[RMDB]
This 177-nucleotide RNA was probed chemically with DMS and 2A3. The 2A3 profile rests on 1,091 reads.
RNA sequence: GGGAACGACUCGAGUAGAGUCGAAAAACAAAAAAUGGUUGCACUUUUGCAACGCAAUAAUGUUAAAUUCUUGGCCAUUGUCACAGACUGUCUGCAGAUUUUGGCUUAUGGUAAUCAGGAAAGCAAGCUUUCACCAUUACUUCGGUAAUGGUGAAAGAAAAGAAACAACAACAACAAC
Reactivity to DMS in 0.01 (KOAc 150mM, MgCl2 10mM, bicine 150mM(pH8.5), 24C), signal-to-noise 2, nucleotides 027 to 126: a040c040a040a020a050a070a080a150u000g000g000u000u010g010c010a070c300u000u010u000u000g020c010a000a020c020g020c060a040a030u000a100a070u000g000u010u000a070a090a110u000u000c000u000u010g000g000c010c010a020u000u000g000u010c020a130c080a070g010a190c150u000g020u000c080u020g010c050a060g020a170u000u000u010u020g000g020c040u000u000a010u020g000g010u000a070a040u000c070a060g010g000a040a020a070g020c240a050a070g000
Reactivity to 2A3 in 0.01 (KOAc 150mM, MgCl2 10mM, bicine 150mM(pH8.5), 24C), signal-to-noise 2, nucleotides 027 to 126: a030c110a050a070a030a000a000a060u100g050g000u000u010g000c010a100c110u080u210u290u220g010c020a020a020c010g010c100a040a020u170a100a020u060g020u000u080a090a110a120u110u000c020u040u030g000g000c010c010a000u000u040g030u030c000a020c040a060g050a110c070u060g080u170c040u160g040c070a110g030a200u030u050u030u060g000g000c010u050u060a050u020g050g030u060a100a050u130c010a030g060g050a000a050a030g040c060a070a020g010